The record gives the reactivity of an RNA of 177 nucleotides to DMS and 2A3.
For DMS the reverse transcriptase was MarathonRT.
For 2A3, 2,156 sequencing reads were counted.
2A3 adducts were read by reverse transcription with SuperScript II with manganese.
Source: RMDB library OK2TRN, as collected in RNAgym.

RNA sequence: GGGAACGACUCGAGUAGAGUCGAAAAGCAGGACAUCCGCACGUUCGUCAGAGACAUCGCGAAGACGGUGUCCCCUGAGAAGCUGCUGGAGAAAGCGUUCGCCAUCCGCCUCUUCUCCCGCAAGGAGGAAACGACCGUUAUUCGUAACGGUCGUUUCAAAAGAAACAACAACAACAAC
Reactivity to DMS in 0.01 (KOAc 150mM, MgCl2 10mM, bicine 150mM(pH8.5), 24C), signal-to-noise 2, nucleotides 027 to 126: g020c060a070g010g010a070c060a070u010c010c000g020c040a070c100g010u000u010c080g010u000c050a050g020a160g010a050c070a030u000c030g000c020g000a130a090g000a100c010g030g010u000g000u010c010c030c020c060u000g000a220g000a100a090g040c080u000g020c030u000g030g020a080g000a070a060a130g000c020g000u000u010c080g010c010c020a040u000c090c010g020c060c020u010c060u000u000c020u000c000c000c000g030c110a060a140g010g010a080g030
Reactivity to 2A3 in 0.01 (KOAc 150mM, MgCl2 10mM, bicine 150mM(pH8.5), 24C), signal-to-noise 2, nucleotides 027 to 126: g070c060a030g000g080a040c010a060u070c020c060g070c070a060c070g110u080u040c040g070u040c010a020g020a020g010a060c000a080u010c020g000c040g160a210a080g140a150c010g050g000u020g010u000c060c010c000c000u080g030a070g010a050a030g040c100u050g000c050u060g010g030a000g020a030a030a000g000c010g040u050u080c070g000c020c000a040u040c030c030g050c000c000u030c050u100u020c000u000c000c000c000g000c020a060a060g060g050a050g010